[RMDB]
RNA sequence: GGGAACGACUCGAGUAGAGUCGAAAACGAGACCUUCGGGUCUCGCCGAUGCGUACUACGAUUCGAGCGUGAUGUGUGACUCCCCACCUAAUCCCAAAUAGGAUUAGAGGUCACACUGACUCGAUCGUAUCGCUAUGACCGAAUCUUCGGAUUCGAAAAUCCGAACAAAUUUCGAUUUGUUCGGAUUAAAAGAAACAACAACAACAAC
Reactivity to DMS in 0.01 (KOAc 150mM, MgCl2 10mM, bicine 150mM(pH8.5), 24C), signal-to-noise 3, nucleotides 027 to 156: c000g010a000g010a010c000c000u000u020c300g070g050g030u000c020u000c000g040c010c070g020a140u000g000c030g000u010a090c100u000a030c000g010a040u010u000c000g020a040g020c020g020u000g000a110u010g030u000g030u000g000a050c010u010c300c080c020c040a300c260c000u000a000a010u010c000c010c010a040a120a260u000a060g000g010a020u000u000a010g010a230g000g000u000c000a020c010a000c000u000g010a140c070u000c010g000a040u010c000g000u000a000u000c020g010c030u010a130u000g010a140c080c010g010a030a080u000c030u000u020c190g040g000a120u000u000c020g000a070a080
Reactivity to 2A3 in 0.01 (KOAc 150mM, MgCl2 10mM, bicine 150mM(pH8.5), 24C), signal-to-noise 7, nucleotides 027 to 156: c010g000a000g010a000c010c020u090u130c300g120g000g000u000c000u010c010g000c000c030g110a080u170g000c020g030u080a140c040u010a000c000g010a020u040u300c020g000a000g030c130g070u220g130a170u220g010u000g000u000g010a000c030u090c030c030c010c010a020c000c010u000a000a000u010c010c030c090a190a300a140u300a110g000g000a000u010u000a000g010a000g000g000u000c000a000c000a010c020u050g070a120c000u010c000g010a000u000c010g010u010a020u240c000g000c030u040a120u150g100a060c100c000g000a010a010u010c010u040u090c230g090g010a000u000u020c010g010a150a100
The record gives the reactivity of an RNA of 207 nucleotides to DMS and 2A3. The 2A3 profile rests on 5,530 reads. It was measured as part of the RMDB library RNAMAK.